This 207-nucleotide RNA was probed chemically with DMS and 2A3. For DMS the reverse transcriptase was MarathonRT. In probing experiments dimethyl sulfate is read out at A N1 and C N3, which are open when not base-paired. The reactions ran in a buffer of 150 mM KOAc, 10 mM MgCl2 and 150 mM bicine (pH 8.5), at 24 C.
RNA sequence: GGGAACGACUCGAGUAGAGUCGAAAAAGGUCCAUGAGCGAAAGCACCUUACUGCAUUUGGGGGCCACUUUCAUCACAAGGGAUUGUGUCUUUCUCCAUGUGACACACGGCACGGACGGAAUGCACGUCCCUGCCUGCAUGCACGACUGUGUAUGCAACCCAGCUUUUAGUUCGCUAAAAGCUGGGUAAAAGAAACAACAACAACAAC
Reactivity to DMS in 0.01 (KOAc 150mM, MgCl2 10mM, bicine 150mM(pH8.5), 24C), signal-to-noise 1, nucleotides 027 to 156: a070g040g000u000c040c030a130u000g010a080g000c130g030a090a000a050g030c030a040c050c040u000u000a170c080u000g000c070a270u030u020u000g030g050g060g000g000c010c050a020c000u000u000u000c000a140u000c060a090c110a060a060g000g080g070a150u000u000g000u000g010u010c110u020u000u000c050u000c020c020a120u010g010u000g000a140c090a130c050a070c080g010g010c030a040c150g000g000a070c060g000g000a100a090u000g000c020a030c040g030u000c020c010c070u000g000c030c060u000g000c020a010u000g040c030a000c000g030a130c170u010g040u010g000u020a020u000g000c000a090
Reactivity to 2A3 in 0.01 (KOAc 150mM, MgCl2 10mM, bicine 150mM(pH8.5), 24C), signal-to-noise 4, nucleotides 027 to 156: a000g050g010u040c050c020a060u090g020a030g070c090g030a050a080a010g070c060a120c060c010u070u150a120c050u090g050c070a210u110u160u160g060g010g000g020g000c070c000a040c030u080u120u060c040a110u050c040a040c040a150a050g070g020g010a020u180u240g060u020g040u060c020u010u030u020c020u000c000c020a050u130g060u070g050a010c020a000c020a020c160g030g000c020a000c020g000g000a000c040g010g040a050a010u110g020c050a020c030g020u000c010c000c000u000g010c000c010u010g000c000a000u000g010c000a010c040g300a270c250u280g000u010g000u000a010u020g000c000a010